[RMDB]
RNA sequence: GGGAACGACUCGAGUAGAGUCGAAAAUAUCCAGUCAUCAGACCAGAUGGAUCGCUACUCUCAACAGAAUCAUCAGGAUCGUUUGUCACGGAUGAUGGAACUGUCGUUUCAAAAGACAGUGAUGGAACCAUCGGAGUGUUUUCGAACACUCCGAUGGAAAAGAAACAACAACAACAAC
Reactivity to 2A3 in 0.01 (KOAc 150mM, MgCl2 10mM, bicine 150mM(pH8.5), 24C), signal-to-noise 1, nucleotides 027 to 126: u180a030u000c010c000a040g050u000c010a070u000c040a030g060a060c000c000a020g070a000u060g100g000a020u070c040g000c030u070a120c040u050c000u030c080a110a280c050a160g030a080a070u160c020a060u060c000a090g090g000a050u020c020g050u010u090u070g080u070c020a010c190g080g000a000u000g020a000u000g050g070a040a000c010u000g030u010c020g050u140u270u220c200a200a170a000a040g020a000c010a010g010u000g000a040u070g020g000a020a080
Reactivity to DMS in 0.01 (KOAc 150mM, MgCl2 10mM, bicine 150mM(pH8.5), 24C), signal-to-noise 2, nucleotides 027 to 126: u010a100u000c010c000a200g000u010c020a030u000c030a100g020a170c090c060a090g000a010u010g010g000a060u010c010g020c040u000a060c050u000c060u010c140a060a080c170a100g000a080a060u000c110a050u000c080a060g020g000a050u000c040g010u010u000u000g000u000c130a110c080g000g020a110u000g000a050u000g000g010a130a020c020u000g020u010c000g030u000u010u000c300a090a090a090a080g000a020c010a030g000u000g000a080u000g000g000a110a220